[RMDB]
RNA sequence: GGGAACGACUCGAGUAGAGUCGAAAAGGCUGUCUGGAGCACUAAGUUGCUAAGGAUUCUGAGAUUGGGUCUAAGGAGCGGGAGAGAGGAUUAAUUAGCAUUGACUGUCAUUAUUACUAAAGUGGGUAGUGACAACACUGUAGUAACCAACUCAUCAUCUUCGGUGUUAUUUCGAUAACACCGAAGAAAAAGAAACAACAACAACAAC
Reactivity to 2A3 in 0.01 (KOAc 150mM, MgCl2 10mM, bicine 150mM(pH8.5), 24C), signal-to-noise 3, nucleotides 027 to 156: g030g000c030u030g000u040c040u050g040g020a020g030c010a010c070u080a070a110g080u160u030g020c010u050a050a060g040g030a040u130u000c030u070g050a070g010a080u050u070g020g010g000u000c020u050a080a070g040g000a050g020c040g010g040g010a030g030a010g000a000g030g000a000u030u070a040a070u050u060a050g000c030a020u000u080g050a070c030u020g020u010c010a020u000u100a070u040u060a120c070u140a150a050a030g060u110g020g020g010u050a040g050u050g040a020c000a060a030c020a040c040u050g000u060a030g020u020a030a040c030c000a020a070c090u070c130a090u150c040a040
Reactivity to DMS in 0.01 (KOAc 150mM, MgCl2 10mM, bicine 150mM(pH8.5), 24C), signal-to-noise 2, nucleotides 027 to 156: g000g040c000u000g000u000c040u000g010g010a200g000c020a080c050u020a030a280g020u010u000g050c010u010a080a200g010g000a110u010u000c060u000g000a100g010a140u000u000g010g020g000u000c040u000a110a110g020g000a100g060c040g030g000g040a090g010a090g000a090g020g000a090u000u010a050a090u010u020a090g010c060a100u030u000g020a120c060u000g010u000c020a080u010u010a050u000u000a050c060u000a040a030a080g010u000g000g010g050u030a080g020u000g010a070c010a010a100c010a020c050u000g020u000a060g010u000a050a040c070c020a050a130c090u020c030a050u000c070a170